Source: RMDB library OK3TST, as collected in RNAgym. Chemical mapping of a 207-nucleotide RNA with 2A3 and DMS. The 2A3 profile rests on 491 reads. The reactions ran in a buffer of 150 mM KOAc, 10 mM MgCl2 and 150 mM bicine (pH 8.5), at 24 C. For DMS, 1,627 sequencing reads were counted. 2A3 adducts were read by reverse transcription with SuperScript II with manganese. DMS adducts were read by reverse transcription with MarathonRT.

RNA sequence: GGGAACGACUCGAGUAGAGUCGAAAAAUUACUCUAAAUAUGGAAGUAAACCUUUUGAAAUAAUAAAGAGACACUUUGCCACUAGUUCCAUUGAUCCAUGAAGAGCUUUCGUAGGAUUGUCAUUUGUAAAAAUUGCUACCUCUGUGUAAAGCAUCAAGAUUUAUGCAGUAUUCGUACUGCAUAAAUCAAAAGAAACAACAACAACAAC
Reactivity to 2A3 in 0.01 (KOAc 150mM, MgCl2 10mM, bicine 150mM(pH8.5), 24C), signal-to-noise 1, nucleotides 027 to 156: a000u070u030a020c000u030c000u070a110a080a110u160a090u100g020g050a040a020g010u090a100a180a110c000c010u020u000u020u070g110a190a140a050u120a140a110u170a040a210a060g040a000g050a010c000a000c080u020u100u180g040c050c000a060c060u020a040g020u000u050c020c010a060u000u090g090a030u000c000c000a020u020g050a080a050g040a000g020c020u020u030u040c020g020u050a070g020g090a090u010u080g010u000c000a020u000u000u110g100u100a040a040a040a040a040u030u040g000c000u010a060c000c010u080c010u000g080u020g070u200a010a080a010g000c010a020u030c070a110a020
Reactivity to DMS in 0.01 (KOAc 150mM, MgCl2 10mM, bicine 150mM(pH8.5), 24C), signal-to-noise 1, nucleotides 027 to 156: a030u010u000a100c010u000c030u000a040a060a170u040a120u010g020g010a160a150g020u020a070a080a160c000c010u030u030u020u000g000a150a100a170u000a130a100u000a050a040a090g000a200g000a070c080a030c030u000u000u000g050c030c040a090c030u000a090g000u000u000c010c010a130u000u000g030a130u000c040c030a120u010g000a010a030g010a130g010c030u000u000u000c040g020u010a060g030g030a060u000u000g020u020c030a060u000u010u000g020u020a040a060a060a050a060u000u000g000c000u000a080c050c030u000c040u000g000u010g040u020a020a090a040g010c040a030u000c070a070a240